[RMDB]
RNA sequence: GGGAACGACUCGAGUAGAGUCGAAAAGAUAUGGAUCAUAACAGACAUGCUAAUUCGGAAACGAGAUAGCAACAGCUGUAUGAUCCUAAGUCAAACAGGAAUAAAGCCUUCGGGCUUUAUUCCUGAAGAUAACACUCUGCUUCGGCAGAGUGUUAUCAAAAGAAACAACAACAACAAC
Reactivity to DMS in 0.01 (KOAc 150mM, MgCl2 10mM, bicine 150mM(pH8.5), 24C), signal-to-noise 1, nucleotides 027 to 126: g010a010u000a200u000g000g000a000u000c000a000u000a030a030c010a040g020a120c250a120u000g010c000u010a010a100u000u000c000g010g000a040a040a110c000g010a000g000a120u010a000g000c000a010a170c300a100g000c000u000g030u000a020u000g000a020u000c000c010u000a010a070g010u000c010a160a140a290c000a030g000g000a010a010u000a000a000a050g000c000c000u000u000c200g110g010g010c000u000u000u000a000u000u000c000c000u000g030a030a040
Reactivity to 2A3 in 0.01 (KOAc 150mM, MgCl2 10mM, bicine 150mM(pH8.5), 24C), signal-to-noise 1, nucleotides 027 to 126: g000a000u020a000u050g000g000a000u000c010a000u080a250a300c030a040g300a260c060a160u030g010c010u010a020a030u110u000c000g010g000a020a040a030c000g000a020g010a080u010a000g020c000a020a120c120a140g010c000u020g020u000a030u000g000a010u000c010c000u000a000a030g010u030c010a040a110a140c020a020g000g020a020a010u030a020a000a000g010c000c000u060u130c300g060g000g000c020u070u010u010a000u020u000c000c000u000g000a010a000